[RMDB]
RNA sequence: GGGAACGACUCGAGUAGAGUCGAAAACUGGCUAGCGGACUGGGUGCUGGGUUCCUGGGUCAGGGUGGCCUGGCUCUCGCCGCGUCAAGCGGUGGUUUCGGCGGUCAGGUCGGCUUGGCUGCCCAGGUGCUGGUCAAUGAUUCGUCAUUGACCAGCAAAAAGAAACAACAACAACAAC
Reactivity to DMS in 0.01 (KOAc 150mM, MgCl2 10mM, bicine 150mM(pH8.5), 24C), signal-to-noise 2, nucleotides 027 to 126: c100u010g000g010c030u000a060g040c000g020g000a120c050u010g000g000g010u000g000c070u000g000g010g010u030u040c020c000u000g000g000g020u000c000a050g000g000g000u010g010g010c000c000u010g010g000c010u030c060u010c070g020c000c010g010c000g020u020c300a110a200g010c000g000g020u000g010g040u010u060u080c220g000g050c140g000g000u010c000a050g010g020u000c000g000g050c030u010u000g000g010c000u000g010c000c010c010a010g000g000
Reactivity to 2A3 in 0.01 (KOAc 150mM, MgCl2 10mM, bicine 150mM(pH8.5), 24C), signal-to-noise 3, nucleotides 027 to 126: c010u030g020g000c030u040a020g090c020g080g000a090c040u050g040g040g030u100g000c010u030g000g080g000u080u130c000c000u020g020g000g060u200c030a030g050g070g270u040g000g010c000c000u000g000g020c020u000c030u060c000g000c010c000g020c010g030u110c110a170a030g000c030g060g040u040g000g080u140u160u210c070g080g000c120g030g040u020c010a020g010g000u010c000g040g080c010u000u030g030g000c090u090g000c010c000c000a040g000g020
Structure probing data (DMS and 2A3) for a 177-nucleotide construct. DMS adducts were read by reverse transcription with MarathonRT. The RNA was probed in 150 mM KOAc, 10 mM MgCl2 and 150 mM bicine (pH 8.5) at 24 C. It was measured as part of the RMDB library OK1LIB.